[RMDB]
RNA sequence: GGGAACGACUCGAGUAGAGUCGAAAAGAUCUGCGCCGAUCCGAAACGCUAGCAAACAGCCCGCAUCAUGUCGUCGCCUAACUUCGACGUGGUGAAAUACUGAGCUUAUGCGAGUAAGCCUGUUAGCAAUAGAUCAGAACGUUCGCGUUCUGAUCAACGGCUAGUUUAAGUUCGCUUAAACUAGCCGAAAAGAAACAACAACAACAAC
Reactivity to DMS in 0.01 (KOAc 150mM, MgCl2 10mM, bicine 150mM(pH8.5), 24C), signal-to-noise 2, nucleotides 027 to 156: g010a090u000c020u000g010c060g000c040c010g000a140u000c030c040g000a150a090a060c070g000c040u000a030g010c030a050a060a160c140a130g000c020c020c060g040c000a040u010c000a040u000g030u000c030g010u000c080g000c070c110u020a090a100c040u000u000c010g000a050c010g050u000g000g060u000g000a070a140a190u000a070c090u000g020a060g010c000u000u000a160u000g000c180g010a130g020u010a070a110g010c030c010u020g000u000u000a040g000c070a090a140u000a140g020a030u000c000a030g010a050a000c000g020u000u010c250g050c000g040u000u000c000u020g000a000u000c010a000a080
Reactivity to 2A3 in 0.01 (KOAc 150mM, MgCl2 10mM, bicine 150mM(pH8.5), 24C), signal-to-noise 5, nucleotides 027 to 156: g050a060u010c020u100g030c050g010c060c040g040a040u030c020c050g030a070a050a020c090g000c050u050a020g000c030a040a020a080c030a060g040c030c030c000g030c000a010u000c000a000u010g000u010c010g010u010c010g050c040c080u190a290a240c010u100u010c000g010a010c000g000u000g000g000u040g010a030a020a010u210a030c050u030g030a010g000c000u030u030a010u090g100c050g030a060g040u010a000a000g010c010c030u050g020u030u040a010g030c030a100a160u060a210g000a000u010c000a000g000a000a000c000g010u040u060c150g010c010g110u000u000c030u000g000a010u000c000a000a000

Record summary
This 207-nucleotide RNA was probed chemically with DMS and 2A3. For 2A3 the reverse transcriptase was SuperScript II with manganese.